Source: RMDB library OK1LIB, as collected in RNAgym. An RNA of 177 nucleotides, treated with 2A3 and read out base by base. Values cover nucleotides 27 to 126. For 2A3, 506 sequencing reads were counted. The RNA was probed in 150 mM KOAc, 10 mM MgCl2 and 150 mM bicine (pH 8.5) at 24 C.
[RMDB]
RNA sequence: GGGAACGACUCGAGUAGAGUCGAAAACUCGAAAGAGACCUGCAUAUCUUAUGCAGAUGAACAAGUCACGUCUGAAAAGCGAAAGCCCUAAGAUAUGCAGCUGUGAAGACUUGACGCAGAAAAUAAAGCUGGUGAGUACGUUCGCGUACUCACCAGCAAAAGAAACAACAACAACAAC
Reactivity to 2A3 in 0.01 (KOAc 150mM, MgCl2 10mM, bicine 150mM(pH8.5), 24C), signal-to-noise 1, nucleotides 027 to 126: c000u000c020g000a000a020a000g180a000g130a140c000c000u020g000c000a000u000a000u000c000u030u010a000u140g060c020a000g000a020u080g000a030a000c000a000a000g000u000c000a000c060g000u000c000u000g170a300a300a120a080g000c000g040a010a070a000g000c000c000c000u000a000a000g000a000u000a000u000g000c000a040g010c010u050g080u090g030a100a000g000a010c000u040u070g000a000c000g000c040a000g060a050a090a020a020u300a030a020a020